[RMDB]
Structure probing data (DMS and 2A3) for a 207-nucleotide construct. The DMS profile rests on 2,655 reads. The data come from the RNA Mapping Database (RMDB), library OK3TST. Conditions: 150 mM KOAc, 10 mM MgCl2 and 150 mM bicine (pH 8.5), 24 C.

RNA sequence: GGGAACGACUCGAGUAGAGUCGAAAAGCAACAGAUAACUGGAUGCAGCGUAGGAUUCUACGCAUAUCCAGUACGAAUGGUACCUGUAAAGAAAAUAAGGCUGGAUGUACAAGUACCAACAGUCGGUUAAGCGAUGGUGAUGUCAAUCACAUUUGCACGUGAUAGGCAUAUUCGUAUGCCUAUCACGAAAAGAAACAACAACAACAAC
Reactivity to DMS in 0.01 (KOAc 150mM, MgCl2 10mM, bicine 150mM(pH8.5), 24C), signal-to-noise 2, nucleotides 027 to 156: g030c000a100a100c030a160g040a110u000a190a050c000u000g030g030a030u000g040c210a200g040c000g020u000a010g020g020a270u020u010c000u010a010c030g060c000a250u000a030u000c000c000a030g010u000a090c120g010a110a130u000g030g010u000a020c020c010u000g000u000a040a080a180g000a120a070a120a160u030a140a120g030g030c000u000g020g000a130u020g010u000a040c000a010a040g010u020a060c020c030a000a110c140a060g000u000c010g040g000u010u000a080a060g020c050g000a050u000g000g040u030g030a020u000g030u020c180a110a100u000c010a020c050a040u000u000u000g070c040a160
Reactivity to 2A3 in 0.01 (KOAc 150mM, MgCl2 10mM, bicine 150mM(pH8.5), 24C), signal-to-noise 4, nucleotides 027 to 156: g040c040a010a100c020a040g050a160u110a120a060c000u010g020g000a010u060g020c110a080g000c110g000u000a010g030g120a300u300u100c010u000a000c000g000c000a000u020a000u030c000c000a010g000u030a000c020g080a120a090u080g050g000u020a030c000c010u010g000u040a010a090a000g100a050a090a020a060u140a110a020g070g020c020u020g070g020a060u020g040u050a010c000a030a030g010u010a000c010c000a020a050c010a030g070u040c030g050g030u110u140a090a020g040c020g030a020u060g040g070u020g000a030u030g120u240c100a100a010u020c000a000c000a050u040u030u220g030c050a010
For 2A3, 2,268 sequencing reads were counted.